[RMDB]
RNA sequence: GGGAACGACUCGAGUAGAGUCGAAAACUGGAAAGGUAAUCUAUACGGCAAGUGCUACAGAAAGUUUGAAUCUUGCUAUUGCUAGCCUUCCUAAAGGAAGUCAUGUCAUUACCUGUAGUGGUGAACAUCUGACUGGGCAAUUCGUUGCCCAGUCAGAAAAAGAAACAACAACAACAAC
Reactivity to DMS in 0.01 (KOAc 150mM, MgCl2 10mM, bicine 150mM(pH8.5), 24C), signal-to-noise 1, nucleotides 027 to 126: c050u000g030g000a050a130a040g030g000u000a020a050u000c200u000a140u000a140c190g010g000c020a030a010g000u010g000c100u000a060c170a080g010a090a140a090g000u020u000u020g010a130a150u000c000u000u000g000c030u000a110u000u010g010c050u000a210g000c170c030u000u000c000c070u000a110a090a090g010g000a050a020g020u010c040a040u000g010u000c160a030u000u000a040c050c000u000g000u000a050g020u000g000g000u040g000a110a080c110a180
Source: RMDB library OK2TST, as collected in RNAgym. This 177-nucleotide RNA was probed chemically with DMS. The RNA was probed in 150 mM KOAc, 10 mM MgCl2 and 150 mM bicine (pH 8.5) at 24 C.